[RMDB]
RNA sequence: GGGAACGACUCGAGUAGAGUCGAAAAGAUAUGGAGAUGAAGCUGCCCAAGGACAAAUCUAAGACAGAGUUUCGGAAACGAAACUUCGAGAUUUGUCCUUGGGAACUACAGCGUAGUCUCCUAAGUCCAUAUGUUGAGUCUUCGGACUCAACAUAUGAAAAGAAACAACAACAACAAC
Reactivity to 2A3 in 0.01 (KOAc 150mM, MgCl2 10mM, bicine 150mM(pH8.5), 24C), signal-to-noise 2, nucleotides 027 to 126: g060a020u100a080u300g000g000a020g010a010u060g220a180a010g000c010u010g040c040c010c010a010a020g030g010a000c000a000a000a010u020c000u200a240a100g140a160c190a090g150a040g000u000u020u030c000g000g040a050a100a080c020g010a000a000a020c020u040u020c000g020a010g000a000u000u030u020g000u030c020c000u000u000g000g010g000a020a010c010u110a010c000a010g000c020g030u010a000g000u010c000u000c000c000u010a010a010g020u030c010
Reactivity to DMS in 0.01 (KOAc 150mM, MgCl2 10mM, bicine 150mM(pH8.5), 24C), signal-to-noise 4, nucleotides 027 to 126: g000a060u010a300u000g000g020a020g010a010u000g000a230a300g000c000u000g010c020c010c000a010a020g010g000a010c000a010a000a030u000c000u000a220a140g020a150c300a130g000a010g010u000u000u000c000g000g020a180a100a200c000g000a000a000a010c000u000u000c050g000a000g010a020u000u000u000g010u000c000c000u010u000g010g010g000a010a000c060u020a300c020a010g000c000g000u000a300g000u000c000u000c000c000u000a010a080g020u000c050